Chemical mapping of a 177-nucleotide RNA with DMS and 2A3. DMS adducts were read by reverse transcription with MarathonRT. The reactions ran in a buffer of 150 mM KOAc, 10 mM MgCl2 and 150 mM bicine (pH 8.5), at 24 C.
RNA sequence: GGGAACGACUCGAGUAGAGUCGAAAAAGCUGGCGCCGCGCUACGCGCCGGGGCGCCUGAAGCAAUGGUUGGCGAUGCUCACGCGCACCUACCCGGAGGCCGUUGCGCUGUUUGCCGAGGUGCGCCGGCCUUCCAGUAGAUUCGUCUACUGGAAGGCAAAAGAAACAACAACAACAAC
Reactivity to DMS in 0.01 (KOAc 150mM, MgCl2 10mM, bicine 150mM(pH8.5), 24C), signal-to-noise 5, nucleotides 027 to 126: a130g010c030u000g010g020c010g020c010c040g020c050g010c050u000a070c130g010c070g010c070c050g020g000g010g020c020g000c000c030u000g000a110a060g010c050a080a070u000g000g010u010u010g020g010c050g020a100u010g000c020u010c040a070c200g000c000g000c010a040c060c050u010a300c060c030c030g000g000a190g000g020c040c040g000u010u000g010c070g010c030u000g010u000u010u000g000c020c020g000a080g000g010u010g000c020g010c020c110g010
Reactivity to 2A3 in 0.01 (KOAc 150mM, MgCl2 10mM, bicine 150mM(pH8.5), 24C), signal-to-noise 2, nucleotides 027 to 126: a000g050c040u030g020g020c010g000c010c010g190c020g040c070u130a070c060g090c070g030c050c000g010g010g000g000c010g000c030c000u040g060a080a000g050c020a020a140u200g190g000u110u170g080g010c030g060a050u090g020c020u050c030a030c020g010c020g000c010a030c010c000u110a110c040c030c000g010g020a040g030g040c040c030g120u140u160g010c100g000c110u060g070u080u140u170g060c030c050g050a030g000g030u010g000c020g000c000c020g070